[RMDB]
RNA sequence: GGGAACGACUCGAGUAGAGUCGAAAAGCGGAUGAGUGGAUCGGCAGAAUCCAUCCACGUGGUGUUCCGGUUGGCGCUAUCAAUGAUAUUGCGCGCGCCCUGGACGAACCACAGGUCAAGGCGCGCAGCCAUGGGAGGGGUUCGCCCCUCCCAUGGCAAAAGAAACAACAACAACAAC
Reactivity to 2A3 in 0.01 (KOAc 150mM, MgCl2 10mM, bicine 150mM(pH8.5), 24C), signal-to-noise 2, nucleotides 027 to 126: g080c030g070g030a040u040g040a060g050u050g020g050a030u040c150g090g050c070a080g150a090a000u000c000c000a000u000c010c000a020c050g020u030g030g030u080g040u090u010c030c010g050g010u080u110g080g000c020g020c030u030a020u150c050a100a090u210g110a070u090a070u210u250g040c050g000c000g000c000g060c010c010c020u020g020g040a000c010g000a060a040c030c020a010c040a040g080g040u020c000a010a020g040g030c020g000c010g010c030a000
Reactivity to DMS in 0.01 (KOAc 150mM, MgCl2 10mM, bicine 150mM(pH8.5), 24C), signal-to-noise 3, nucleotides 027 to 126: g010c050g020g010a070u010g000a060g010u000g010g000a030u000c110g030g010c150a120g010a160a120u000c020c020a060u000c030c000a040c070g010u000g000g020u010g020u000u000c000c020g010g010u000u020g020g010c030g030c040u000a110u000c080a070a090u010g010a110u010a300u010u000g020c130g010c020g000c000g010c030c000c000u010g010g010a020c030g000a070a100c070c070a090c060a120g000g010u000c040a070a060g010g000c020g010c030g010c030a090
This 177-nucleotide RNA was probed chemically with 2A3 and DMS. As a SHAPE reagent, 2A3 marks flexible, mostly unpaired nucleotides at the ribose 2'-OH. Reactivities are given for positions 27 through 126. For DMS the reverse transcriptase was MarathonRT. Source: RMDB library OK2TST, as collected in RNAgym.